[RMDB]
RNA sequence: GGGAACGACUCGAGUAGAGUCGAAAAAACUAAUAUUUCUCAGGCCUAAGGCCCACCCGGUGAAAUGCUUAGGGGGCACUCAAGAAUGAUCGAGAGUGUCAACCAUUCUUGUCAACCCAUAGAUUCCAUAGCCUUUAGUUUUCGAACUAAAGGCUAUAAAAGAAACAACAACAACAAC
Reactivity to 2A3 in 0.01 (KOAc 150mM, MgCl2 10mM, bicine 150mM(pH8.5), 24C), signal-to-noise 2, nucleotides 027 to 126: a010a000c150u200a140a100u100a090u070u070u010c050u000c040a020g000g050c000c010u080a060a090g040g000c030c010c010a040c010c020c000g000g010u050g030a160a090a040u090g000c010u100u100a080g010g020g010g010g000c000a000c000u040c000a000a040g050a060a100u240g080a230u200c040g000a000g000a000g040u030g000u000c020a010a020c000c000a030u060u060c000u040u060g040u040c020a080a000c040c030c000a010u000a050g100a120u100u110c060c090
Reactivity to DMS in 0.01 (KOAc 150mM, MgCl2 10mM, bicine 150mM(pH8.5), 24C), signal-to-noise 4, nucleotides 027 to 126: a050a070c080u000a060a080u000a090u000u010u000c010u000c050a090g010g000c050c030u010a120a090g020g000c000c010c090a080c080c050c030g020g010u000g000a050a070a020u000g010c070u000u010a100g030g010g010g000g000c030a030c040u000c000a010a240g010a060a100u010g010a090u000c030g000a300g010a060g030u000g010u010c020a040a080c060c020a100u000u000c030u000u000g010u000c090a090a140c010c030c010a100u010a070g010a180u010u000c090c080